RNA sequence: GGGAACGACUCGAGUAGAGUCGAAAAUGAAAUAGCGUGUGCAAGACGCUGAUCUUGCCAUGAUCUGGAACUUUAGUGCUGAGGUCCGAGUUCCAGGGUAUCAUGUCGGACCUUAGCACUAUUUAAAGCGUGUUAAUGAGUUCGCUCAUUAACACGCAAAAGAAACAACAACAACAAC
Reactivity to 2A3 in 0.01 (KOAc 150mM, MgCl2 10mM, bicine 150mM(pH8.5), 24C), signal-to-noise 2, nucleotides 027 to 126: u150g080a040a060a020u130a060g040c000g010u040g070u070g010c040a020a010g010a020c070g050c300u110g040a270u000c000u000u010g000c000c000a000u000g040a050u050c040u050g090g100a040a070c010u070u030u020a010g000u000g000c000u020g000a000g000g000u000c000c000g000a010g050u120u020c050c010a010g060g010g020u160a060u240c070a040u100g070u050c010g000g000a010c000c010u010u000a000g000c000a000c000u010a000u000u080u060a060a020a000
Reactivity to DMS in 0.01 (KOAc 150mM, MgCl2 10mM, bicine 150mM(pH8.5), 24C), signal-to-noise 1, nucleotides 027 to 126: u010g020a080a100a140u000a000g010c040g040u000g000u000g000c020a020a020g000a030c030g030c230u030g010a060u010c010u000u000g000c000c030a020u000g000a100u010c070u010g000g020a120a080c170u000u020u000a000g000u000g000c000u010g000a000g000g010u000c010c010g030a050g020u000u000c090c050a080g000g010g030u000a090u000c050a070u010g000u010c000g000g000a010c010c000u010u000a010g000c000a020c000u000a000u010u010u000a040a090a070